Chemical mapping of a 177-nucleotide RNA with DMS and 2A3. For DMS the reverse transcriptase was MarathonRT. Source: RMDB library M2PK50, as collected in RNAgym. Reactivities are given for positions 27 through 126.

[RMDB]
RNA sequence: GGGAACGACUCGAGUAGAGUCGAAAAGGAGUUAAGUUCGCUUAACUCCCACUACCGUGAAUGCGACUCGGUAUAUCGCAAUAACCCUUGGAAACAAGGGAACCACUGACGACUUCGGUCGUCAGAACCUCUAACAUGAGUUCGCUCAUGUUAGAGGAAAAGAAACAACAACAACAAC
Reactivity to DMS in 0.01 (KOAc 150mM, MgCl2 10mM, bicine 150mM(pH8.5), 24C), signal-to-noise 4, nucleotides 027 to 126: g000g000a010g010u000u000a000a010g010u000u020c180g010c010u010u000a010a000c000u010c000c000c060a090c120u010a160c010c010g030u000g010a120a080u000g020c020g010a030c060u010c070g020g010u000a120u010a090u000c030g010c030a090a100u010a060a120c000c000c000u000u000g000g000a130a060a160c000a000a000g010g010g000a030a040c170c180a170c010u010g000a010c000g000a010c000u000u010c200g030g010u000c010g000u000c010a000g000a060a130
Reactivity to 2A3 in 0.01 (KOAc 150mM, MgCl2 10mM, bicine 150mM(pH8.5), 24C), signal-to-noise 8, nucleotides 027 to 126: g020g000a000g000u000u000a010a000g010u030u080c180g020c120u000u000a010a000c000u020c000c000c000a070c030u070a050c000c010g070u080g160a200a100u110g020c030g050a030c040u030c090g040g050u070a140u030a010u090c030g010c060a040a060u110a150a170c000c000c000u000u000g010g020a030a040a030c000a000a000g000g000g030a010a020c020c030a050c040u000g010a000c000g000a000c000u030u070c260g110g000u000c000g000u000c000a000g000a000a030
The RNA was probed in 150 mM KOAc, 10 mM MgCl2 and 150 mM bicine (pH 8.5) at 24 C.